[RMDB]
RNA sequence: GGGAACGACUCGAGUAGAGUCGAAAAUGCUAUUAGACCACAAUGUGCUAAUUGAUCGAGGAUUUCUUUUGAUGAUGAAAGACCUAUGUGUGGCCCGAUUCAACACCCUAUUGGGUUUAACGCUAAGAACGUCCGGUAAUUUCGAUUACCGGACGUUAAAAGAAACAACAACAACAAC
Reactivity to DMS in 0.01 (KOAc 150mM, MgCl2 10mM, bicine 150mM(pH8.5), 24C), signal-to-noise 2, nucleotides 027 to 126: u060g020c020u020a120u010u010a080g010a070c010c030a070c110a090a030u010g000u040g030c020u000a030a110u000u000g000a040u000c070g010a100g030g000a220u000u020u010c000u000u000u000u000g030a090u010g010a080u010g000a040a090a070g030a000c120c100u050a100u050g000u000g000u020g000g010c010c030c010g000a050u000u040c080a010a070c150a070c220c040c060u020a060u000u030g030g000g000u010u000u000a000a090c240g000c040u010a060a080g050
Reactivity to 2A3 in 0.01 (KOAc 150mM, MgCl2 10mM, bicine 150mM(pH8.5), 24C), signal-to-noise 3, nucleotides 027 to 126: u130g020c040u020a050u060u070a000g050a040c030c020a090c060a230a050u070g000u080g080c040u020a030a100u060u020g020a030u020c070g020a100g060g000a080u010u170u050c030u010u090u070u050g180a260u110g010a010u140g060a060a050a030g050a040c030c020u130a080u070g050u040g020u030g030g000c000c020c020g000a020u060u090c010a000a010c020a040c040c000c040u100a100u070u080g000g050g000u000u000u090a020a020c020g000c010u040a050a000g050
Overview
An RNA of 177 nucleotides, treated with DMS and 2A3 and read out base by base. 2A3 adducts were read by reverse transcription with SuperScript II with manganese. It was measured as part of the RMDB library OK1LIB.